RNA sequence: GGGAACGACUCGAGUAGAGUCGAAAAGGAGACGUCGAGGGCCGAGGUGAUCUCGUCGGCAAUGAGGACCGAGGGGUUCAGGAGGGUGGAGAUCACCAUCACCAUCCGCUGCUUCAUCCCACCGGAAAGUAGUUCAGUUCUUCGGAACUGAACUACUAAAAGAAACAACAACAACAAC
Reactivity to DMS in 0.01 (KOAc 150mM, MgCl2 10mM, bicine 150mM(pH8.5), 24C), signal-to-noise 1, nucleotides 027 to 126: g010g010a050g000a000c050g030u000c270g000a030g000g000g000c020c090g040a110g030g030u020g000a020u000c000u000c010g000u000c010g010g030c030a080a150u040g010a110g000g000a030c030c010g000a170g020g030g000g000u010u000c050a130g000g050a270g000g030g010u030g000g020a030g010a000u000c010a010c030c030a030u010c080a100c010c000a060u000c010c040g010c060u000g010c030u000u000c030a060u000c010c050c000a190c130c190g030g000a140a050
Reactivity to 2A3 in 0.01 (KOAc 150mM, MgCl2 10mM, bicine 150mM(pH8.5), 24C), signal-to-noise 2, nucleotides 027 to 126: g020g020a020g030a030c000g040u080c040g030a050g020g030g030c190c080g030a020g010g000u020g000a020u000c010u000c020g090u040c020g060g020c080a030a200u250g050a090g050g000a040c040c000g040a110g060g190g010g030u080u000c010a030g070g060a060g080g110g020u180g120g010a020g020a010u010c010a000c000c000a130u040c010a000c000c000a020u050c020c010g010c030u040g000c000u000u000c010a050u000c010c000c040a050c030c010g040g070a150a180

Structure probing data (DMS and 2A3) for a 177-nucleotide construct. For 2A3 the reverse transcriptase was SuperScript II with manganese. The 2A3 profile rests on 1,487 reads. Conditions: 150 mM KOAc, 10 mM MgCl2 and 150 mM bicine (pH 8.5), 24 C.